[RMDB]
This 207-nucleotide RNA was probed chemically with 2A3 and DMS. For DMS, 1,647 sequencing reads were counted. For 2A3, 1,068 sequencing reads were counted. For 2A3 the reverse transcriptase was SuperScript II with manganese. The reactions ran in a buffer of 150 mM KOAc, 10 mM MgCl2 and 150 mM bicine (pH 8.5), at 24 C.
RNA sequence: GGGAACGACUCGAGUAGAGUCGAAAAGGCUGUUGAAAUACAUUCCUGUGCCGGCAAUACAGUGUGUAUGGAGGUCUCAAUGGCUCGGAAGUGCCAGCAAAACGGCGUAGAUAUUAGCAGACGUAUGAUAGGAUGCAUCCGUUCGCGGAUGCAUCAAGCAUACUCUACCCUUCGGGGUAGAGUAUGCAAAAGAAACAACAACAACAAC
Reactivity to 2A3 in 0.01 (KOAc 150mM, MgCl2 10mM, bicine 150mM(pH8.5), 24C), signal-to-noise 2, nucleotides 027 to 156: g010g010c010u030g040u300u020g050a000a000a080u060a010c020a020u040u070c030c020u010g030u020g040c030c030g060g000c000a030a060u070a080c010a020g020u020g000u000g010u030a010u020g020g020a040g000g000u000c000u000c040a040a230u070g010g000c030u040c080g030g050a040a000g040u040g070c010c010a030g030c060a010a000a030a030c010g010g000c010g030u060a030g050a040u080a060u160u170a070g080c070a040g000a080c070g070u090a070u080g090a070u050a090g190g000a000u000g000c000a000u010c010c000g000u030u040c190g000c010g080g000a000u000g000c000a000u000c000a000a000
Reactivity to DMS in 0.01 (KOAc 150mM, MgCl2 10mM, bicine 150mM(pH8.5), 24C), signal-to-noise 1, nucleotides 027 to 156: g050g000c010u010g020u010u010g000a020a050a070u000a050c020a220u010u000c300c030u010g050u010g080c050c030g040g000c060a100a110u000a060c010a090g020u020g000u000g030u000a000u000g000g070a080g010g000u000c050u010c050a060a100u050g020g010c000u000c020g090g050a040a080g050u000g020c050c020a060g020c030a060a050a130a180c130g020g000c040g000u000a080g010a180u000a020u000u000a050g020c030a110g010a030c040g000u000a050u010g010a180u000a090g040g010a040u000g010c000a020u010c000c000g070u000u020c290g060c020g000g000a020u000g020c000a010u000c000a010a130